Conditions: 150 mM KOAc, 10 mM MgCl2 and 150 mM bicine (pH 8.5), 24 C.
Structure probing data (DMS and 2A3) for a 207-nucleotide construct.
The 2A3 profile rests on 9,457 reads.
Source: RMDB library OK3TST, as collected in RNAgym.
Reactivities are given for positions 27 through 156.
2A3 adducts were read by reverse transcription with SuperScript II with manganese.

[RMDB]
RNA sequence: GGGAACGACUCGAGUAGAGUCGAAAAUUUCAGGUCGUGCAGCCUGUACGUGUCCUUCUGCUUGAUGACCUUGUCGUCUUCCGUGAUGCCGACGAUUUUCGUGUCGUAGAUGAAGCCCGAGCACAUCUGCAAUAACUUCGACUGCAAGGAUGCCGCCGGUAUACUACUCUUUCGAGAGUAGUAUACCAAAAGAAACAACAACAACAAC
Reactivity to DMS in 0.01 (KOAc 150mM, MgCl2 10mM, bicine 150mM(pH8.5), 24C), signal-to-noise 3, nucleotides 027 to 156: u010u010u000c020a090g020g020u000c040g020u000g020c060a130g020c030c010u020g030u000a050c090g040u000g010u000c020c020u010u000c030u010g010c020u010u000g000a110u010g010a080c010c030u010u000g010u000c050g000u000c010u000u010c040c050g030u000g030a100u000g030c050c030g000a060c030g010a110u000u000u000u000c090g030u010g010u000c040g010u000a100g000a120u000g020a100a110g010c030c040c030g010a120g020c060a190c010a060u000c020u010g020c020a080a090u000a070a080c080u000u000c030g020a060c040u020g000c040a070a070g010g000a070u000g010c000c020g020c050c060
Reactivity to 2A3 in 0.01 (KOAc 150mM, MgCl2 10mM, bicine 150mM(pH8.5), 24C), signal-to-noise 9, nucleotides 027 to 156: u070u090u060c020a010g010g020u050c040g100u120g060c050a020g030c010c010u030g040u060a060c080g030u050g050u050c020c000u020u070c030u040g050c050u040u090g050a060u080g030a090c010c010u010u060g020u030c020g010u010c000u100u030c040c040g090u100g060a090u120g060c050c020g020a040c020g030a070u070u050u070u120c110g010u070g030u060c020g020u030a040g010a090u070g040a070a030g030c030c040c040g030a040g010c020a020c000a060u030c030u020g010c030a060a130u080a140a070c030u050u070c060g060a040c030u040g030c050a040a060g030g010a040u040g030c020c030g060c020c050